[RMDB]
RNA sequence: GGGAACGACUCGAGUAGAGUCGAAAAACACGGUGAGUUACGACUCACCGUGAACCACAAUGAUGGCAAUAUUUUUCGUCAACAGCAGUUCACCUAGUGAGUGUUGAGACUCUGGGUCUGAGUGAAAAAGACGAGAUUCUUUCGAGAAUCUCGUCUUAAAAGAAACAACAACAACAAC
Reactivity to DMS in 0.01 (KOAc 150mM, MgCl2 10mM, bicine 150mM(pH8.5), 24C), signal-to-noise 2, nucleotides 027 to 126: a080c010a000c000g010g030u000g000a010g030u050u000a040c260g000a050c000u000c000a000c000c020g000u000g000a030a080c040c000a060c250a270a070u020g000a070u000g000g000c120a070a080u020a170u010u030u000u010u000c030g000u000c050a040a120c080a020g000c050a030g040u030u000c090a030c020c050u000a030g010u000g020a030g030u020g000u020u000g000a210g010a000c010u020c050u010g050g000g000u040c030u030g020a100g000u010g000a070a050a110
Reactivity to 2A3 in 0.01 (KOAc 150mM, MgCl2 10mM, bicine 150mM(pH8.5), 24C), signal-to-noise 3, nucleotides 027 to 126: a000c010a000c000g040g020u010g000a000g000u040u050a060c160g200a030c070u000c000a000c010c000g000u000g000a010a020c000c000a050c040a040a080u230g080a060u040g000g000c010a120a060u030a230u090u050u000u090u080c050g000u000c020a060a070c020a020g060c000a010g010u140u130c030a050c070c080u110a100g110u040g060a060g010u070g030u100u210g010a030g020a040c000u060c100u070g020g010g050u010c020u100g120a080g050u160g040a000a000a100
Structure probing data (DMS and 2A3) for a 177-nucleotide construct. For DMS the reverse transcriptase was MarathonRT. Reactivities are given for positions 27 through 126. High DMS reactivity at an A or C suggests that its Watson-Crick edge is free. The reactions ran in a buffer of 150 mM KOAc, 10 mM MgCl2 and 150 mM bicine (pH 8.5), at 24 C.